This 177-nucleotide RNA was probed chemically with DMS and 2A3.
DMS adducts were read by reverse transcription with MarathonRT.
The reactions ran in a buffer of 150 mM KOAc, 10 mM MgCl2 and 150 mM bicine (pH 8.5), at 24 C.
2A3 adducts were read by reverse transcription with SuperScript II with manganese.
[RMDB]
RNA sequence: GGGAACGACUCGAGUAGAGUCGAAAAUUGCUGUGACGUGCGAUGGCACCAAACUUUCGGGGGCCAUCGAGCUUCUAGAUGGUAAGAUUGUUGCAGCUGAGCUAGAGCUUCCAUCUCUCGUGCGAGGCCACCAUCAGCAUUUCGAUGCUGAUGGUGGAAAAGAAACAACAACAACAAC
Reactivity to DMS in 0.01 (KOAc 150mM, MgCl2 10mM, bicine 150mM(pH8.5), 24C), signal-to-noise 2, nucleotides 027 to 126: u010u000g010c020u090g020u000g000a020c040g030u020g000c030g030a010u000g000g040c000a010c030c000a040a240a120c130u000u040u000c080g020g000g000g000g010c000c000a000u000c000g000a150g000c110u020u010c040u000a000g000a090u050g060g060u030a040a080g010a030u000u140g000u000u000g030c090a060g060c000u000g040a180g000c050u040a000g000a260g030c020u020u000c000c030a020u010c000u030c020u030c140g010u000g050c080g020a220g000g000
Reactivity to 2A3 in 0.01 (KOAc 150mM, MgCl2 10mM, bicine 150mM(pH8.5), 24C), signal-to-noise 2, nucleotides 027 to 126: u100u090g000c000u000g010u050g020a030c010g050u040g060c000g030a050u010g000g010c010a070c060c010a050a190a220c080u140u290u300c210g000g000g010g110g000c000c000a000u000c000g000a000g000c000u000u020c000u000a020g000a040u040g020g000u040a000a020g040a150u100u210g000u000u000g000c000a010g000c020u070g060a010g040c030u050a030g010a000g180c000u050u000c010c000a010u000c000u000c000u030c030g060u050g070c110g000a040g000g130